The data come from the RNA Mapping Database (RMDB), library RNAMAK.
Chemical mapping of a 207-nucleotide RNA with DMS and 2A3.
The reactions ran in a buffer of 150 mM KOAc, 10 mM MgCl2 and 150 mM bicine (pH 8.5), at 24 C.
The 2A3 profile rests on 1,812 reads.
For 2A3 the reverse transcriptase was SuperScript II with manganese.
Values cover nucleotides 27 to 156.
[RMDB]
RNA sequence: GGGAACGACUCGAGUAGAGUCGAAAAGGGGUCGGAUGUUGACGUGUCGGGCAGAAGCUUGGAUUUAUGGCUGAAGCCUCCACGGCCAUUGUCAGCUUCUGACCGACACGAAGGUCCGACGGAGGCACCCAAAUCGGAUGACUUCGGUCAUCCGAAACUUUAUGUGGGUGUUCGCACCCACAUAAAGAAAAGAAACAACAACAACAAC
Reactivity to DMS in 0.01 (KOAc 150mM, MgCl2 10mM, bicine 150mM(pH8.5), 24C), signal-to-noise 1, nucleotides 027 to 156: g040g010g010g020u010c020g000g010a070u000g020u020u020g020a300c050g000u000g050u000c010g000g010g020c000a020g020a120a020g020c000u030u000g090g030a120u000u000u000a020u010g000g000c000u000g060a090a110g000c010c000u000c010c060a300c010g010g030c000c010a030u000u000g010u000c000a110g020c020u000u000c010u010g030a030c000c010g020a040c030a010c020g060a100a080g030g000u000c020c030g010a030c050g010g000a110g030g000c080a110c000c000c010a060a110a170u000c000g030g000a030u010g000a030c000u000u010c300g000g030u010c010a060u020c000c010g000a000a020a090
Reactivity to 2A3 in 0.01 (KOAc 150mM, MgCl2 10mM, bicine 150mM(pH8.5), 24C), signal-to-noise 2, nucleotides 027 to 156: g030g030g000g000u000c010g000g000a010u020g050u300u160g180a140c030g000u000g000u000c010g020g000g000c010a000g000a000a000g030c060u180u180g120g010a090u300u300u100a020u040g010g020c020u030g040a130a050g040c060c040u070c030c020a060c020g000g010c000c000a020u020u000g000u010c020a010g000c000u000u000c020u030g000a000c030c010g000a000c000a000c000g000a000a000g020g000u000c000c000g000a000c000g000g010a000g020g000c040a060c050c000c030a050a050a050u040c010g010g000a000u000g000a010c020u020u070c300g080g000u000c000a020u030c000c000g000a000a000a000